[RMDB]
RNA sequence: GGGAACGACUCGAGUAGAGUCGAAAAGAUAUGGAGCUUCAUAAACAGCUUGGACCUGAGAUCGGAAACGAUCUCAGCUAGCUGAUAAUAUGAGAGCUCCUAAGUCAAAGCUGCGUUCGCGCAGCAAUCUACGUACGAAGUUCGCUUCGUACGUAGAAAAAGAAACAACAACAACAAC
Reactivity to 2A3 in 0.01 (KOAc 150mM, MgCl2 10mM, bicine 150mM(pH8.5), 24C), signal-to-noise 4, nucleotides 027 to 126: g030a030u140a080u190g000g000a000g010c010u000u020c010a040u040a040a300a190c010a000g010c000u100u220g050g110a180c010c040u000g010a010g000a020u000c010g000g070a050a030a050c010g000a010u000c000u000c000a000g000c000u020a000g000c000u010g060a140u140a300a060u040a030u050g250a300g030a000g140c010u020c000c000u000a060a000g000u050c060a130a060a110g000c000u010g000c000g050u050u150c300g000c000g000c170a010g000c000a000a010
Reactivity to DMS in 0.01 (KOAc 150mM, MgCl2 10mM, bicine 150mM(pH8.5), 24C), signal-to-noise 4, nucleotides 027 to 126: g010a050u000a300u000g000g000a000g020c010u000u010c000a010u010a030a130a280c010a000g000c000u000u030g030g000a120c300c020u000g000a000g000a010u000c010g040g000a160a080a210c000g000a010u000c000u000c000a000g010c020u000a010g000c020u000g000a100u010a140a140u000a020u000g010a110g000a020g020c000u000c000c000u000a010a080g030u000c020a150a110a120g000c000u000g010c000g010u000u010c270g020c030g000c000a010g010c000a040a020